Chemical mapping of a 177-nucleotide RNA with DMS and 2A3. Values cover nucleotides 27 to 126. 2A3 adducts were read by reverse transcription with SuperScript II with manganese. The 2A3 profile rests on 17,172 reads. The reactions ran in a buffer of 150 mM KOAc, 10 mM MgCl2 and 150 mM bicine (pH 8.5), at 24 C.
[RMDB]
RNA sequence: GGGAACGACUCGAGUAGAGUCGAAAAUCGGCACCCAUACUCUCCAGCAUGUCGACCGCUCGCUGGUAGUCGACACCUUCGUACCGUUCGCGCCAGCGUCCCAGCACCGCAUAGCCCGCCGACACCAUGACGAUUUAAUAUUCGUAUUAAAUCGUCAAAAAGAAACAACAACAACAAC
Reactivity to DMS in 0.01 (KOAc 150mM, MgCl2 10mM, bicine 150mM(pH8.5), 24C), signal-to-noise 9, nucleotides 027 to 126: u000c060g010g020c050a150c040c020c020a130u010a100c080u000c040u000c030c040a080g010c090a100u000g010u000c030g010a060c040c040g010c050u000c100g020c080u010g010g020u000a060g020u010c020g010a050c090a070c100c060u000u000c140g010u010a110c150c100g010u000u000c040g020c050g000c020c020a040g010c040g000u000c020c010c020a100g010c050a060c050c040g020c060a060u000a130g000c020c020c020g000c020c030g000a070c090a100c060c060a140
Reactivity to 2A3 in 0.01 (KOAc 150mM, MgCl2 10mM, bicine 150mM(pH8.5), 24C), signal-to-noise 7, nucleotides 027 to 126: u060c010g030g010c020a040c020c000c020a030u100a090c040u050c010u020c050c010a010g010c020a070u080g030u060c010g030a070c020c020g020c040u050c040g080c050u080g030g020u040a110g060u100c020g010a010c000a040c060c020u120u150c060g070u070a090c040c040g040u060u060c030g000c010g010c040c010a020g010c020g020u020c000c000c000a010g020c010a020c020c020g040c030a050u070a040g030c000c000c010g010c010c010g030a010c010a030c050c010a060